[RMDB]
This 207-nucleotide RNA was probed chemically with DMS and 2A3. Conditions: 150 mM KOAc, 10 mM MgCl2 and 150 mM bicine (pH 8.5), 24 C. DMS adducts were read by reverse transcription with MarathonRT. For 2A3 the reverse transcriptase was SuperScript II with manganese.
RNA sequence: GGGAACGACUCGAGUAGAGUCGAAAACAAGGGACUUCGGUCCCUUGAAAAACCGUAGGGAACGAUAAGAUACCAUGGCAACAGCUUCGAAAGAGGACAUGCCAUCCCUAUCUUUUGACGUUCCCUAAACGGAAAAAGCCAAUCUUCGGAUUGGCAAAGCGUAUUGUUCUUUCGAGAACAAUACGCUAAAAGAAACAACAACAACAAC
Reactivity to DMS in 0.01 (KOAc 150mM, MgCl2 10mM, bicine 150mM(pH8.5), 24C), signal-to-noise 1, nucleotides 027 to 156: c010a010a000g040g000g000a000c000u000u000c300g080g000u000c000c000c000u000u000g000a000a090a050a030a200c000c000g040u000a140g020g000g010a030a010c000g010a220u000a080a020g030a050u000a000c030c020a020u040g000g060c000a060a180c120a200g030c010u010u000c000g030a130a100a220g020a010g000g020a030c060a300u030g000c000c020a000u000c040c000c050u010a020u000c070u000u010u000u010g030a300c130g000u000u000c000c000c010u000a000a020a090c030g030g020a000a080a060a140a200g010c010c000a000a000u010c000u020u000c300g040g000a010u010u010g030g030c020a000a020
Reactivity to 2A3 in 0.01 (KOAc 150mM, MgCl2 10mM, bicine 150mM(pH8.5), 24C), signal-to-noise 2, nucleotides 027 to 156: c000a000a010g000g010g050a000c020u040u150c300g140g000u000c000c000c010u000u000g000a000a000a000a000a010c000c010g010u020a030g000g010g000a020a000c010g030a050u010a070a010g000a000u000a030c080c140a040u070g010g010c010a060a050c090a300g040c050u000u030c030g040a130a040a020g000a000g000g060a050c010a070u040g000c010c000a010u000c020c000c000u010a000u020c030u060u080u050u120g230a110c030g000u000u000c010c000c000u000a020a010a000c000g000g070a050a080a000a130a040g000c000c000a000a010u010c000u040u080c270g060g000a000u000u000g000g010c000a070a010